[RMDB]
RNA sequence: GGGAACGACUCGAGUAGAGUCGAAAAGUCGCUCGUCGUCGUCGGUGAAGGCGACUAUCGAGGGCGUCGUCCGUUCACCCUCGGCGUUGGCGAUGAUCUCCGGAUCGCCGCCUUCCAUCACUGCGAAUCGGGUACCGAUCUUCGGAUCGGUACCCGAAAAAGAAACAACAACAACAAC
Reactivity to 2A3 in 0.01 (KOAc 150mM, MgCl2 10mM, bicine 150mM(pH8.5), 24C), signal-to-noise 1, nucleotides 027 to 126: g010u000c000g010c020u090c040g110u000c000g020u000c000g010u000c000g030g060u040g060a040a000g100g020c030g000a000c000u030a080u070c060g110a130g090g030g000c090g040u010c000g070u120c010c000g110u000u000c010a000c000c000c000u000c000g000g000c010g050u070u060g000g000c000g010a010u010g010a000u000c000u000c010c020g020g050a070u000c000g000c000c000g000c000c050u030u030c000c020a100u060c000a030c130u060g050c000g060a080a140
This 177-nucleotide RNA was probed chemically with 2A3. Source: RMDB library OK1LIB, as collected in RNAgym. The 2A3 profile rests on 734 reads.